Source: RMDB library OK3TST, as collected in RNAgym. The record gives the reactivity of an RNA of 207 nucleotides to 2A3 and DMS. For DMS the reverse transcriptase was MarathonRT.

RNA sequence: GGGAACGACUCGAGUAGAGUCGAAAAACUGGUGGAACAGACGCUAUGGUGACAGUUGAGGUUGAAAUGUCGCGCGGUGAUCGGACUGUCUCUGUUGCAACAUCUGACUCUGAUAUCACACGAUGUAGCGUUGAGGCAAUGGUUGAAGCGCUUGAUCAACCAUAUACGACUUCGGUCGUAUAUGGUUAAAAGAAACAACAACAACAAC
Reactivity to 2A3 in 0.01 (KOAc 150mM, MgCl2 10mM, bicine 150mM(pH8.5), 24C), signal-to-noise 5, nucleotides 027 to 156: a010c040u040g010g000u020g010g030a060a040c010a030g050a040c010g030c070u090a050u170g010g020u020g020a030c030a050g030u070u070g040a040g060g000u030u020g050a030a080a080u110g020u040c060g000c000g000c030g100g010u090g030a040u030c030g010g040a010c070u030g000u000c010u000c000u050g160u190u260g000c040a030a020c000a030u020c030u080g050a130c020u050c080u220g100a100u120a080u280c100a070c010a000c170g010a010u010g020u030a040g000c000g090u160u060g010a010g000g000c000a020a070u100g060g000u020u030g030a020a010g010c010g040c060u020u070g040a060u070c040
Reactivity to DMS in 0.01 (KOAc 150mM, MgCl2 10mM, bicine 150mM(pH8.5), 24C), signal-to-noise 1, nucleotides 027 to 156: a020c020u020g000g010u000g010g000a140a060c040a130g020a050c010g030c050u000a080u000g040g030u000g020a050c030a050g010u000u000g040a030g020g030u000u000g000a100a080a080u000g030u010c030g040c050g030c000g050g030u040g020a040u000c100g010g040a070c080u010g000u000c010u000c020u000g030u010u000g000c030a090a110c060a070u000c040u000g010a030c010u000c080u000g000a130u010a070u000c010a030c050a090c090g010a030u010g020u010a080g010c010g010u010u000g020a040g000g020c050a060a110u010g010g000u000u000g030a150a170g000c090g020c050u000u000g010a170u000c060
The 2A3 profile rests on 2,967 reads. 2A3 adducts were read by reverse transcription with SuperScript II with manganese. Conditions: 150 mM KOAc, 10 mM MgCl2 and 150 mM bicine (pH 8.5), 24 C.